RNA sequence: GGGAACGACUCGAGUAGAGUCGAAAAAGUGGUUAGUUUACAUAAAUCAAAGAAUUUGCUUAGAGUAUCUUGAUUCUCUGUCUUCAGUCUUAUUUAUUUCUUUAGUAUCCACCUAGUCUAAGCACAGAAGCAAUAAAGAUGGGCAAGAAAAAAAUCACAUUUAACGACCAUUCGUGGUCGUUAAAUGAAAAGAAACAACAACAACAAC
Reactivity to DMS in 0.01 (KOAc 150mM, MgCl2 10mM, bicine 150mM(pH8.5), 24C), signal-to-noise 1, nucleotides 027 to 156: a080g030u000g020g030u010u010a090g010u010u010u010a110c080a160u000a040a080a130u000c040a060a030a180g000a150a110u010u000u010g010c060u010u000a090g020a140g010u000a030u000c040u010u010g010a140u000u000c050u000c020u010g000u010c030u000u010c030a080g010u020c040u000u000a030u010u010u000a040u010u010u020c030u000u000u000a150g030u000a100u000c030c010a040c010c010u000a100g050u000c030u000a060a050g000c000a110c040a120g000a050a130g000c030a060a080u000a080a060a080g000a070u000g020g000g000c030a050a070g020a020a020a040a090a040a060a070u010c040a190
Reactivity to 2A3 in 0.01 (KOAc 150mM, MgCl2 10mM, bicine 150mM(pH8.5), 24C), signal-to-noise 3, nucleotides 027 to 156: a000g050u040g010g030u050u030a090g040u100u100u180a030c010a020u200a080a160a090u190c100a080a150a080g070a070a120u180u130u100g030c040u060u120a040g000a060g120u030a080u070c030u040u160g030a060u160u070c010u010c000u030g050u000c020u050u040c070a070g020u000c030u060u050a100u080u120u040a160u070u130u060c050u110u160u110a050g030u090a090u090c020c010a000c030c000u000a000g020u010c000u010a010a000g070c010a010c010a020g080a020a000g030c030a000a060u070a190a080a000g040a040u070g000g040g000c030a060a010g070a090a060a020a010a020a010a010u160c030a010